The record gives the reactivity of an RNA of 177 nucleotides to 2A3 and DMS.
Source: RMDB library OK2TST, as collected in RNAgym.

RNA sequence: GGGAACGACUCGAGUAGAGUCGAAAAUCACUCAGGAUGUCUUCAGCGUGACCCAUACUUGCAUCGAUGGGGAUUGGAACAAGGUUCUAAUCCAUAUCGACAUUCGCGCCAUUGGGGAUAAGCGAGAUCGAGAUGACUAAUUCGUUAGUCAUCUCGAAAAAGAAACAACAACAACAAC
Reactivity to 2A3 in 0.01 (KOAc 150mM, MgCl2 10mM, bicine 150mM(pH8.5), 24C), signal-to-noise 5, nucleotides 027 to 126: u060c010a030c030u040c020a040g090g050a120u130g050u020c020u060u050c060a010g010c010g040u020g040a050c000c020c010a020u120a100c090u060u140g060c040a060u020c010g010a010u000g000g050g000g000a010u000u010g010g010a030a040c100a300a160g280g010u000u000c010u020a010a010u010c000c010a010u000a000u020c010g010a000c010a100u070u090c040g000c000g020c060c030a160u120u140g040g000g020g040a040u050a090a010g060c030g030a020g010a040
Reactivity to DMS in 0.01 (KOAc 150mM, MgCl2 10mM, bicine 150mM(pH8.5), 24C), signal-to-noise 6, nucleotides 027 to 126: u010c100a120c040u000c050a080g000g010a090u000g010u000c020u000u000c030a080g010c040g010u010g000a120c100c030c020a090u000a080c160u000u000g010c110a190u000c010g000a010u000g010g000g010g010a030u000u010g000g000a020a010c030a160a180g030g010u000u000c000u000a010a000u000c000c010a040u000a010u000c000g020a030c160a110u000u000c080g020c040g000c050c230a170u010u000g000g000g010g000a060u010a060a200g000c070g000a040g000a180